An RNA of 207 nucleotides, treated with 2A3 and read out base by base.

[RMDB]
RNA sequence: GGGAACGACUCGAGUAGAGUCGAAAAGAGCGAUUAGACAAAGGGGUAGAGCUACAUAUUAGAUAGCUGUAUAAUCGUUCAAGUUACAUCAAAACAUCUUCAAUAUUUAUUACUUACUUUCCUUUGUGCCAGAGUACGGUAUUCGUACCGUACUCAACUUUUGGCCUGUGUUCGCACAGGCCAAAAGAAAAGAAACAACAACAACAAC
Reactivity to 2A3 in 0.01 (KOAc 150mM, MgCl2 10mM, bicine 150mM(pH8.5), 24C), signal-to-noise 1, nucleotides 027 to 156: g050a000g000c000g000a000u000u040a060g020a060c040a010a150a110g080g000g010g010u060a020g020a030g050c000u000a000c000a100u270a180u170u070a020g110a190u000a010g000c000u030g010u010a040u040a020a000u020c000g000u010u000c000a010a020g050u100u080a080c050a110u090c090a120a060a030a030c020a080u000c020u190u030c030a110a080u020a190u020u250u210a220u190u050a090c020u090u000a030c020u090u100u050c020c000u130u000u070g010u000g050c020c040a030g030a000g000u000a000c000g010g000u000a020u010u050c080g040u040a020c010c000g000u000a000c000u000c010a000a000
For 2A3 the reverse transcriptase was SuperScript II with manganese. The 2A3 profile rests on 406 reads.